[RMDB]
RNA sequence: GGGAACGACUCGAGUAGAGUCGAAAAAGUUCGCGCUUCCGUGAAACGCGAAAAUCGGACGGUGGCAGCAAGUCGCAUCGCAAAACCGCGGCAAGUGGAGUUAGCGAGAGGAGGCUGGGUUUUGGCUAGAACACACGGUACUUCGGUACCGUGUGAAGCCGUAGAUAAGAUUCGUCUUAUCUACGGCAAAAGAAACAACAACAACAAC
Reactivity to 2A3 in 0.01 (KOAc 150mM, MgCl2 10mM, bicine 150mM(pH8.5), 24C), signal-to-noise 2, nucleotides 027 to 156: a000g080u050u010c010g000c000g010c040u080u050c050c070g100u040g110a120a070a040c010g020c010g000a030a030a000a040u090c040g000g020a020c050g030g050u040g020g000c050a040g010c040a110a030g080u040c020g030c060a050u060c030g060c090a050a040a000a100c060c030g050c030g020g000c100a100a060g000u030g020g040a050g040u040u080a010g010c020g000a040g000a020g040g000a030g030g000c070u060g010g050g040u000u030u060u060g000g000c010u030a050g060a200a000c000a000c000a000c010g010g000u000a010c010u040u040c120g090g000u000a020c000c000g000u000g020u000g000a010a000
Reactivity to DMS in 0.01 (KOAc 150mM, MgCl2 10mM, bicine 150mM(pH8.5), 24C), signal-to-noise 2, nucleotides 027 to 156: a130g020u000u020c000g020c020g050c020u000u000c040c160g040u000g020a070a090a010c030g000c020g000a020a020a080a080u010c050g010g010a070c040g020g000u020g000g000c030a100g040c070a030a130g030u000c020g030c050a150u000c050g000c030a090a070a090a070c040c050g030c030g030g010c060a080a120g050u000g040g000a030g010u000u000a100g020c050g020a060g020a150g060g030a060g030g040c040u010g020g010g000u010u000u000u000g030g000c010u000a060g010a110a230c010a040c000a000c030g020g000u010a010c000u000u000c230g040g000u000a000c010c000g000u000g000u000g000a030a100